[RMDB]
RNA sequence: GGGAACGACUCGAGUAGAGUCGAAAAGGGAUCCCCAUCGCCAAGGUCCAGGAGGUGGUACGAUACAUCCCCAUCACCAGGUUGCACGACACCUCCCGCUUCCUCAAGGGGGUGGUCAAUCUCAGGGAACACGACAUAAUUUCGAUUAUGUCGUGUUAAAAGAAACAACAACAACAAC
Reactivity to DMS in 0.01 (KOAc 150mM, MgCl2 10mM, bicine 150mM(pH8.5), 24C), signal-to-noise 9, nucleotides 027 to 126: g010g010g000a060u010c060c120c000c040a060u000c040g000c020c020a120a090g010g010u000c160c050a090g010g010a050g010g020u000g010g010u010a060c180g010a100u000a100c090a080u000c030c000c020c100a090u010c100a120c070c060a080g000g000u000u000g000c140a050c060g000a140c020a020c010c000u000c000c000c030g000c130u010u000c030c030u000c120a160a120g010g010g010g010g020u000g000g000u000c060a070a060u000c030u000c050a140g010g010g000
Reactivity to 2A3 in 0.01 (KOAc 150mM, MgCl2 10mM, bicine 150mM(pH8.5), 24C), signal-to-noise 2, nucleotides 027 to 126: g070g010g020a050u040c020c010c000c010a030u040c020g080c020c010a060a040g100g020u040c030c030a010g020g010a020g010g020u030g020g060u080a050c050g010a030u030a100c020a060u050c020c020c020c010a070u070c010a020c030c000a000g040g000u020u040g040c100a020c040g140a040c030a010c020c010u030c000c000c000g020c050u080u040c020c020u060c030a060a070g010g000g010g010g000u010g010g000u000c010a010a040u010c030u030c040a030g050g000g030